[RMDB]
RNA sequence: GGGAACGACUCGAGUAGAGUCGAAAAACUUUGGCCGAGGCUGCUAGGCGGGUGCGCACUGCUGUCUGGCCCGGCGCCGCGCUAGGGCGCACGUUUCGCUCUGCGGAGGGUAACCGGGCUGAAAUAAAGCCAUUAACUAUUUCGAUAGUUAAUGGCUAAAAGAAACAACAACAACAAC
Reactivity to DMS in 0.01 (KOAc 150mM, MgCl2 10mM, bicine 150mM(pH8.5), 24C), signal-to-noise 5, nucleotides 027 to 126: a070c090u000u010u000g010g020c020c030g020a080g010g010c060u010g020c050u000a140g020g010c050g020g000g020u000g020c080g020c060a080c050u000g020c050u000g010u000c070u000g010g000c020c010c010g010g020c270g000c010c020g000c030g020c050u010a040g010g000g000c000g020c110a060c220g000u000u000u010c020g010c000u000c010u000g000c010g000g010a110g000g010g010u000a090a110c010c000g010g000g010c000u000g000a030a040a070u010a070a100
Reactivity to 2A3 in 0.01 (KOAc 150mM, MgCl2 10mM, bicine 150mM(pH8.5), 24C), signal-to-noise 2, nucleotides 027 to 126: a000c040u080u060u100g040g030c030c010g030a030g040g000c020u030g000c030u080a050g070g000c050g010g030g030u110g010c020g000c010a040c070u050g020c000u030g050u100c060u050g020g000c000c010c000g030g000c010g000c010c000g060c010g000c080u200a030g000g010g000c010g040c060a060c070g050u070u220u200c010g000c010u020c000u000g020c010g020g060a230g080g040g040u030a090a100c010c010g000g030g000c010u020g040a030a030a000u190a070a160